[RMDB]
RNA sequence: GGGAACGACUCGAGUAGAGUCGAAAACUGCUGAUACUUCUGUCGGUUGGUUUAAUUCUGCAUUAGAAACAGUUGAUGAAGUGAGGCUAAUUACAGGAGGAAGAAUAUCUUUUAUUAAUGCAGGAACCCCUUAUUCAUCGUUCGCGAUGAAUAAGGGAAAAGAAACAACAACAACAAC
Reactivity to 2A3 in 0.01 (KOAc 150mM, MgCl2 10mM, bicine 150mM(pH8.5), 24C), signal-to-noise 2, nucleotides 027 to 126: c010u010g000c000u020g010a040u020a170c020u010u060c000u090g060u050c040g040g040u020u100g020g050u070u050u050a100a110u120u000c020u010g000c010a000u020u020a050g120a070a130a030c050a020g070u080u060g040a050u060g020a040a030g060u020g030a040g070g000c020u040a040a090u090u120a040c030a030g050g030a030g040g030a110a030g080a210a000u140a040u140c020u020u210u020u020a100u110u080a050a010u030g000c000a000g030g010a060a050c000
Reactivity to DMS in 0.01 (KOAc 150mM, MgCl2 10mM, bicine 150mM(pH8.5), 24C), signal-to-noise 2, nucleotides 027 to 126: c040u000g010c020u000g000a190u000a080c030u020u000c010u020g050u000c040g050g000u000u000g030g010u010u000u000a080a150u000u000c010u000g000c020a020u010u000a080g000a100a080a080c110a080g010u000u000g010a060u000g000a020a020g030u010g000a230g010g010c020u000a030a090u010u000a040c060a030g000g000a040g000g000a080a070g000a080a090u010a090u020c040u010u000u010u010a050u000u000a030a020u000g010c020a020g010g020a080a130c200